[RMDB]
RNA sequence: GGGAACGACUCGAGUAGAGUCGAAAAUUAAAGUACGUAGAAGCGGCGUGAAGCAUGUAGAAAGCUUUGCGAGCAUAUCGAGCUACAUGUGAGCGAAAGCCGUUACGUACAACGAUAUGCAAAAAAACAAUAGCGUUUACUUCGGUAAACGCUAUUGAAAAGAAACAACAACAACAAC
Reactivity to DMS in 0.01 (KOAc 150mM, MgCl2 10mM, bicine 150mM(pH8.5), 24C), signal-to-noise 3, nucleotides 027 to 126: u010u010a080a070a120g000u000a000c000g010u000a020g040a170a290g000c000g000g020c000g000u000g010a110a300g010c000a000u010g000u000a040g000a080a040a100g000c070u000u000u000g010c140g000a100g000c010a000u000a010u000c000g000a140g000c010u000a020c000a020u000g000u000g000a100g010c160g020a070a090a120g000c000c000g010u020u000a000c010g020u000a000c010a030a070c050g000a010u010a000u000g000c000a000a000a030a070a030a040a100
Reactivity to 2A3 in 0.01 (KOAc 150mM, MgCl2 10mM, bicine 150mM(pH8.5), 24C), signal-to-noise 2, nucleotides 027 to 126: u060u010a050a000a010g000u010a000c000g010u010a030g020a300a040g070c020g020g010c030g040u130g000a000a010g020c010a000u020g010u020a040g070a190a090a020g040c030u100u130u150g090c060g050a040g020c000a000u010a010u020c020g010a020g040c000u000a000c010a000u020g040u020g030a060g060c240g120a200a070a030g000c010c000g010u040u010a010c000g000u000a000c010a000a010c010g000a010u000a000u010g000c000a050a100a000a000a000a000a040